The data come from the RNA Mapping Database (RMDB), library OK3TST. Structure probing data (2A3 and DMS) for a 207-nucleotide construct. The DMS profile rests on 4,620 reads. The RNA was probed in 150 mM KOAc, 10 mM MgCl2 and 150 mM bicine (pH 8.5) at 24 C. For 2A3, 1,734 sequencing reads were counted.

RNA sequence: GGGAACGACUCGAGUAGAGUCGAAAAUACAUCCCGUGAGUUUGAGCGACAGCGGAGGAAUAAGAAAGCAAGGUGUGGUGUGACCAGGCCGUGCGCACGAGUUGCGAAAGUGUGCGCCACCUUUCCUGCCGCCGACAUGGCUGGAGCCAGCCGGGAGGCGGAAUUGGACUUUCGAGUCCAAUUCCGCAAAAGAAACAACAACAACAAC
Reactivity to 2A3 in 0.01 (KOAc 150mM, MgCl2 10mM, bicine 150mM(pH8.5), 24C), signal-to-noise 3, nucleotides 027 to 156: u130a020c020a040u030c000c000c000g020u080g030a110g040u130u160u120g040a040g030c020g050a060c030a050g000c040g030g030a010g030g070a040a090u170a130a070g110a120a040a010g070c110a050a050g090g000u090g020u070g070g030u060g050u080g090a130c090c000a020g060g000c050c020g050u080g000c000g020c000a010c020g080a090g070u160u200g130c070g090a100a030a040g120u110g000u000g060c000g010c000c000a020c010c000u010u080u110c010c020u030g200c000c000g000c040c000g020a040c050a090u140g020g000c010u020g040g000a030g080c020c010a010g010c000c030g010g000g000a020g040
Reactivity to DMS in 0.01 (KOAc 150mM, MgCl2 10mM, bicine 150mM(pH8.5), 24C), signal-to-noise 2, nucleotides 027 to 156: u000a090c040a150u000c020c000c010g010u000g000a120g010u010u000u010g000a120g040c050g010a060c020a030g000c040g000g010a080g000g010a100a080u010a130a160g010a120a090a140g000c080a080a080g000g030u000g060u000g030g020u040g040u000g000a110c040c040a140g010g040c010c080g030u000g020c040g000c000a040c030g000a090g020u000u010g000c070g000a090a070a170g020u010g030u000g010c010g030c010c030a060c010c030u000u000u000c050c020u010g000c030c030g010c000c020g000a080c030a100u000g020g010c020u000g010g010a210g010c080c030a100g010c050c040g000g010g030a140g010